This 177-nucleotide RNA was probed chemically with 2A3 and DMS. The RNA was probed in 150 mM KOAc, 10 mM MgCl2 and 150 mM bicine (pH 8.5) at 24 C. DMS adducts were read by reverse transcription with MarathonRT.
RNA sequence: GGGAACGACUCGAGUAGAGUCGAAAAACGUCGCCCGCGCGAAUGCGCUCAACGCGCGCCAGAAUUUUCUGCUCAAAUGCGGCUUUGCAUUUCGCCGGAACGAAGACGCGGGUGCCAUUGGUACACAGAACUCACACUUAUUCGUAAGUGUGAGUUCAAAAGAAACAACAACAACAAC
Reactivity to 2A3 in 0.01 (KOAc 150mM, MgCl2 10mM, bicine 150mM(pH8.5), 24C), signal-to-noise 2, nucleotides 027 to 126: a030c020g040u000c000g000c000c000c000g020c010g020c010g090a160a110u140g010c020g050c040u050c100a120a150c190g000c000g010c000g050c090c070a070g120a100a040u090u050u090u070c030u030g010c010u040c150a040a030a010u030g010c020g190g000c170u160u240u240g000c000a030u000u010u060c030g000c030c030g040g000a020a020c050g060a040a010g120a040c000g020c000g000g030g010u000g000c010c000a150u130u200g090g090u160a050c130a010c020a070
Reactivity to DMS in 0.01 (KOAc 150mM, MgCl2 10mM, bicine 150mM(pH8.5), 24C), signal-to-noise 3, nucleotides 027 to 126: a060c090g030u000c040g010c010c010c020g030c030g030c030g010a110a110u010g030c010g030c020u010c170a090a110c210g030c090g010c020g020c150c100a090g030a110a140u010u000u000u000c010u000g010c020u020c120a040a020a020u000g000c010g010g020c230u010u030u040g000c020a010u000u000u010c130g010c090c060g030g020a020a030c140g010a120a050g000a090c020g010c010g000g000g000u000g010c030c030a090u010u000g020g020u020a100c150a090c240a140